[RMDB]
RNA sequence: GGGAACGACUCGAGUAGAGUCGAAAAGAUAUGGACGUGAACUACACGAAUGAAGAGCGAUGAAAUCGGAAACGAUGGAGCUUCAAAGUCGUGCACGUCCUAAGUCAAAGCGGACUUCGGUCCGCAACUGUUUCAUCACGUUCGCGUGAUGAAACAGAAAAGAAACAACAACAACAAC
Reactivity to 2A3 in 0.01 (KOAc 150mM, MgCl2 10mM, bicine 150mM(pH8.5), 24C), signal-to-noise 2, nucleotides 027 to 126: g040a010u050a040u120g000g000a000c000g010u010g030a110a000c060u160a040c260a000c010g050a070a020u120g020a070a110g010a000g150c070g120a260u130g110a190a240a040u040c020g010g050a110a000a020c010g000a000u030g090g090a020g040c000u060u090c070a160a100a010g100u010c000g000u020g000c000a030c000g000u000c000c000u000a020a010g000u000c060a130a040a040g000c030g000g000a000c010u060u120c300g060g000u000c000c000g000c020a000a010
Reactivity to DMS in 0.01 (KOAc 150mM, MgCl2 10mM, bicine 150mM(pH8.5), 24C), signal-to-noise 2, nucleotides 027 to 126: g000a050u000a300u010g000g030a040c000g000u000g010a050a060c050u020a300c060a010c000g030a020a020u000g000a170a130g010a040g010c020g000a070u020g000a140a100a010u000c000g020g000a060a140a120c010g030a000u010g000g000a100g010c000u000u000c050a020a180a080g000u000c000g030u000g010c000a020c020g020u010c010c010u010a000a020g010u000c010a090a070a110g000c010g010g010a000c020u000u010c140g010g020u000c030c020g020c000a000a010